[RMDB]
Chemical mapping of a 207-nucleotide RNA with DMS and 2A3. Conditions: 150 mM KOAc, 10 mM MgCl2 and 150 mM bicine (pH 8.5), 24 C. The 2A3 profile rests on 1,085 reads.
RNA sequence: GGGAACGACUCGAGUAGAGUCGAAAAUCAGAAUCAGGCCGGAGUGUUUAGCGCUCCGUAAACACGGUCGUACAUCCAGCCGGUAGCCUGGUCCCUUGCAUUGAGUGAUGUACGGAGUUUAUAGAGCAAAAGAAAGACCUGUUCGCAGGUCUUUCAACAUAAAAUAGUCCUUCGGGACUAUUUUAUGAAAAGAAACAACAACAACAAC
Reactivity to DMS in 0.01 (KOAc 150mM, MgCl2 10mM, bicine 150mM(pH8.5), 24C), signal-to-noise 2, nucleotides 027 to 156: u010c040a100g010a070a110u000c000a020g020g040c000c040g000g000a100g020u020g020u000u000u000a150g020c060g000c000u000c000c010g030u000a000a040a060c030a170c040g010g020u000c020g010u000a040c040a020u000c020c020a260g010c030c040g040g010u010a040g010c040c010u000g020g010u000c020c030c040u000u020g010c060a140u000u000g010a170g020u000g030a050u000g000u010a020c020g010g010a230g010u000u010u000a050u000a070g000a100g020c010a090a090a120a100g000a020a000a030g000a000c010c020u010g000u010u010c300g050c010a010g010g000u000c000u000u000u000c000a040a160
Reactivity to 2A3 in 0.01 (KOAc 150mM, MgCl2 10mM, bicine 150mM(pH8.5), 24C), signal-to-noise 2, nucleotides 027 to 156: u040c000a010g070a040a020u010c010a000g000g000c010c000g010g020a040g000u030g030u080u210u190a190g080c060g000c000u010c010c010g000u000a000a030a000c110a010c060g080g030u040c000g010u030a000c000a010u020c020c030a020g040c010c030g000g010u030a030g010c000c000u000g000g010u010c000c000c000u040u090g050c040a100u020u200g040a060g120u160g020a010u000g010u000a000c010g050g040a040g000u090u180u080a190u120a080g110a020g050c050a040a100a050a010g000a010a020a000g000a000c000c000u010g020u050u110c300g040c100a000g000g000u010c000u000u000u000c000a000a000

For DMS the reverse transcriptase was MarathonRT. Values are in units of 0.01, from 0 to 300, in steps of 10.